[RMDB]
RNA sequence: GGGAACGACUCGAGUAGAGUCGAAAAGUUACCGAUUACGUUCCUAUGGGUUCGUGAGAGGAGGUGAAACUAAUGAGCCUUAUACCAGAGCUUGCUCUUACUAUUAUAACAGAUGUUAUAGCUGGAAGGUAUCGGUUAGAUUCGUCUAACCGAUACCAAAAGAAACAACAACAACAAC
Reactivity to 2A3 in 0.01 (KOAc 150mM, MgCl2 10mM, bicine 150mM(pH8.5), 24C), signal-to-noise 6, nucleotides 027 to 126: g040u040u060a070c000c020g010a040u030u080a040c000g000u020u020c000c000u080a230u260g130g000g000u010u020c010g010u020g040a060g010a020g050g010a040g050g060u090g040a070a050a030c050u070a180a090u090g030a010g020c010c000u050u080a080u050a100c040c010a050g000a020g120c030u040u050g010c000u040c000u050u050a090c060u070a070u270u030a040u030a100a050c040a020g200a190u130g080u070u020a040u060a090g030c020u030g060g030a130a140
Reactivity to DMS in 0.01 (KOAc 150mM, MgCl2 10mM, bicine 150mM(pH8.5), 24C), signal-to-noise 3, nucleotides 027 to 126: g010u000u000a060c030c030g000a140u000u000a040c030g020u000u000c000c010u000a140u020g020g000g000u000u000c040g010u000g010a030g010a190g010g010a110g010g020u000g010a150a050a070c080u010a040a110u000g000a180g010c020c020u000u010a110u010a120c050c090a080g040a080g020c060u000u010g010c030u000c020u000u020a090c080u010a080u030u000a020u000a010a030c030a200g020a070u020g000u000u000a000u000a030g010c070u000g000g010a260a070